Notes:
This 207-nucleotide RNA was probed chemically with 2A3 and DMS. For DMS the reverse transcriptase was MarathonRT. For DMS, 1,523 sequencing reads were counted. The reactions ran in a buffer of 150 mM KOAc, 10 mM MgCl2 and 150 mM bicine (pH 8.5), at 24 C.
[RMDB]
RNA sequence: GGGAACGACUCGAGUAGAGUCGAAAAGCACUGAAUGGGAGAGCAGACAGACACAGGUGUCAUCCCAGAGGUGGACUCCGUAUGGCACAGCGGCAAGGGAGUGUGAAGGGUUAUGACAGAUGCUGAGUAGGUGCUAGCAACAUAUUUUUUAAAAUAACUAAAUUAAUCGAUUCGUCGAUUAAUUUAGAAAAGAAACAACAACAACAAC
Reactivity to 2A3 in 0.01 (KOAc 150mM, MgCl2 10mM, bicine 150mM(pH8.5), 24C), signal-to-noise 3, nucleotides 027 to 156: g020c000a010c020u070g110a180a050u070g020g050g010a030g010a000g020c060a020g060a110c020a020g060a030c020a000c030a160g110g110u080g030u070c040a070u050c000c000c000a020g020a010g020g030u050g020g020a040c010u010c010c030g050u080a080u040g010g000c010a010c030a070g010c020g040g000c030a030a070g070g000g000a030g030u080g030u040g040a070a060g070g000g010u120u110a050u090g000a010c000a030g090a030u070g010c020u030g030a050g060u050a020g050g000u010g000c000u030a030g040c010a030a040c010a010u260a130u060u110u040u040u150u250a070a150a100a100u300a030a050
Reactivity to DMS in 0.01 (KOAc 150mM, MgCl2 10mM, bicine 150mM(pH8.5), 24C), signal-to-noise 1, nucleotides 027 to 156: g040c000a120c000u090g000a150a090u000g010g000g020a100g030a100g000c050a070g000a200c040a120g010a140c090a110c130a080g040g020u000g000u000c050a150u010c020c000c020a180g000a190g000g040u000g000g020a050c020u000c020c010g000u000a070u000g010g020c060a040c030a110g060c010g020g010c060a120a100g000g000g020a090g020u000g050u000g030a050a120g030g000g010u000u000a070u010g070a050c060a120g000a050u000g040c030u010g020a090g000u000a110g040g040u000g000c050u000a110g010c030a050a040c040a040u000a000u010u010u030u020u040u010a020a040a100a150u000a140a300